[RMDB]
RNA sequence: GGGAACGACUCGAGUAGAGUCGAAAAGAAAGAAAUCAAAGCGGAUUCUAGUCUAAUCGGAGAGACUCGAAUAACUCGUUCUUGAUAGCAAUAUCCGUAUUAGAUCUAACUGAGGGAUGAGUAGAAAGGGAAUCAUACAGUUCGCUGUAUGAUUCCCAAAAGAAACAACAACAACAAC
Reactivity to 2A3 in 0.01 (KOAc 150mM, MgCl2 10mM, bicine 150mM(pH8.5), 24C), signal-to-noise 3, nucleotides 027 to 126: g120a030a070a000g030a000a050a030u040c020a050a070a050g060c060g030g020a020u080u000c030u060a000g090u000c000u050a110a070u110c100g110g000a100g000a000g010a080c010u030c060g070a050a050u090a020a080c010u020c050g040u050u010c030u030u080g070a080u040a010g020c070a070a090u020a020u210c010c010g020u090a070u020u100a020g030a010u050c000u090a070a140c060u100g050a040g000g040g010a050u000g000a010g040u050a000g060a060a060a070
Reactivity to DMS in 0.01 (KOAc 150mM, MgCl2 10mM, bicine 150mM(pH8.5), 24C), signal-to-noise 2, nucleotides 027 to 126: g000a050a100a050g010a090a040a030u020c010a100a200a180g000c030g000g010a020u010u000c020u040a050g000u000c000u000a020a060u030c070g030g000a040g010a030g000a060c030u000c050g000a020a010u040a080a120c150u030c040g060u000u000c060u010u030g050a040u010a050g000c090a060a160u020a080u000c000c020g000u020a050u020u000a010g030a090u030c090u000a060a060c050u020g010a070g000g020g000a060u000g000a080g000u000a130g000a050a060a150